The record gives the reactivity of an RNA of 207 nucleotides to DMS and 2A3. 2A3 adducts were read by reverse transcription with SuperScript II with manganese. The RNA was probed in 150 mM KOAc, 10 mM MgCl2 and 150 mM bicine (pH 8.5) at 24 C. The data come from the RNA Mapping Database (RMDB), library RNAMAK. For DMS the reverse transcriptase was MarathonRT.
RNA sequence: GGGAACGACUCGAGUAGAGUCGAAAACUGGUUUCGACCAGCAAGGAACCUUUGUGGAUUGACAUGUGUUGUCAGCUCUGAUGAGCCCAUUGGGCUCAUCCAGAGCUUGGAUUUACACAUUUAAAUCCACUCUGGUAUAUCGUGGCUUCGGCCACAAUCUCUGCUUUAGAUUCGUCUAAAGCAGAGAAAAAGAAACAACAACAACAAC
Reactivity to DMS in 0.01 (KOAc 150mM, MgCl2 10mM, bicine 150mM(pH8.5), 24C), signal-to-noise 1, nucleotides 027 to 156: c010u010g020g020u010u000u060c300g040a090c020c000a020g000c030a100a150g000g010a110a090c000c000u000u000u020g030u000g020g020a050u000u000g000a190c300a040u000g020u000g020u000u000g010u000c020a050g010c020u000c010u000g020a060u000g020a010g020c030c000c000a260u000u000g110g040g020c020u010c020a000u000c050c040a020g000a010g040c000u000u000g010g030a010u000u000u000a010c080a020c050a080u000u000u000a120a050a010u000c010c010a010c010u000c010u010g010g030u000a130u000a040u000c110g000u010g020g010c000u000u000c300g060g010c000c010a040c010a020a160
Reactivity to 2A3 in 0.01 (KOAc 150mM, MgCl2 10mM, bicine 150mM(pH8.5), 24C), signal-to-noise 4, nucleotides 027 to 156: c010u010g000g040u070u120u100c190g100a040c010c010a010g080c060a100a110g180g080a090a050c010c000u010u000u000g010u000g000g000a010u010u010g010a030c010a080u000g000u000g000u010u010g000u000c000a000g000c000u000c000u000g010a000u000g000a010g000c000c010c090a260u130u300g010g000g000c000u000c000a000u000c000c030a000g000a000g000c000u010u080g000g000a010u170u110u300a000c000a000c000a000u000u010u090a000a000a000u010c000c000a000c000u030c000u000g000g060u060a090u070a050u200c060g010u000g000g010c010u060u040c300g120g000c010c020a000c000a010a020